[RMDB]
RNA sequence: GGGAACGACUCGAGUAGAGUCGAAAACAUAUAGUUUUUCUGGAGAUGAGGUGGACUGAGUUUGGGGGAAGAACACAGGUCCAUCUACAGUGAAAGCGCUGACUUUGUUUUUGGAGAAGAUGGUGUCAUGGCUUCUCUGGGGAGAUGAGAUGAGGGAGCUAUUACCACCCUUCGGGGUGGUAAUAGCAAAAGAAACAACAACAACAAC
Reactivity to 2A3 in 0.01 (KOAc 150mM, MgCl2 10mM, bicine 150mM(pH8.5), 24C), signal-to-noise 2, nucleotides 027 to 156: c030a020u260a040u140a250g030u010u020u030u050u020c060u070g020g030a130g030a060u150g030a030g050g000u030g010g030a010c010u030g030a010g090u030u100u140g020g010g010g000g030a040a060g040a090a000c030a000c020a040g000g030u000c030c000a010u000c000u010a020c000a040g010u030g040a090a080a020g040c110g050c150u030g060a080c040u080u170u110g050u110u050u080u150u070g060g020a040g010a040a020g030a040u030g000g010u060g050u090c050a050u040g030g000c010u070u030c050u030c010u050g010g000g020g000a040g000a020u050g030a020g010a090u070g000a030g000g020g000a010